The record gives the reactivity of an RNA of 177 nucleotides to 2A3 and DMS. Reactivities are given for positions 27 through 126. 2A3 adducts were read by reverse transcription with SuperScript II with manganese. The data come from the RNA Mapping Database (RMDB), libraries RFM100 and RFMREP.
RNA sequence: GGGAACGACUCGAGUAGAGUCGAAAAAGUAUAUCUUGUUUACCUUAUCUUUCUGUGGAAAAGUUUUGAUGUCUAGGUUUGUCACAUCAUGCCUGUUGCCUAGCACUACCAAAAGGGUUGUUAUCUACAAAAAGAUAAAUUUCGAUUUAUCUUUUUGAAAAGAAACAACAACAACAAC
Reactivity to 2A3 in 0.01 (KOAc 150mM, MgCl2 10mM, bicine 150mM(pH8.5), 24C), signal-to-noise 5, nucleotides 027 to 126: a000g150u130a110u040a060u150c080u090u090g060u070u100u100a110c000c000u030u030a060u060c010u030u070u000c040u050g050u120g100g030a030a050a030a070g050u080u140u100u100g080a090u040g070u040c040u030a020g040g060u100u140u120g080u100c040a040c010a080u120c030a040u080g020c000c010u070g010u100u080g010c000c010u000a010g000c020a020c020u020a050c030c020a010a060a060a080g110g030g000u000u000g010u010u020a100u080c000u010a030
Reactivity to DMS in 0.01 (KOAc 150mM, MgCl2 10mM, bicine 150mM(pH8.5), 24C), signal-to-noise 4, nucleotides 027 to 126: a070g010u010a090u030a060u000c030u010u010g010u010u000u010a080c070c020u000u010a070u020c020u010u000u010c050u020g020u000g010g000a050a100a110a110g010u020u000u010u000g010a080u000g000u010c030u000a070g000g030u010u010u010g010u010c050a080c080a050u000c110a080u010g010c050c020u000g020u000u000g010c030c030u000a060g030c070a040c040u000a100c050c030a040a040a070a110g010g010g010u000u010g000u010u000a080u010c010u000a100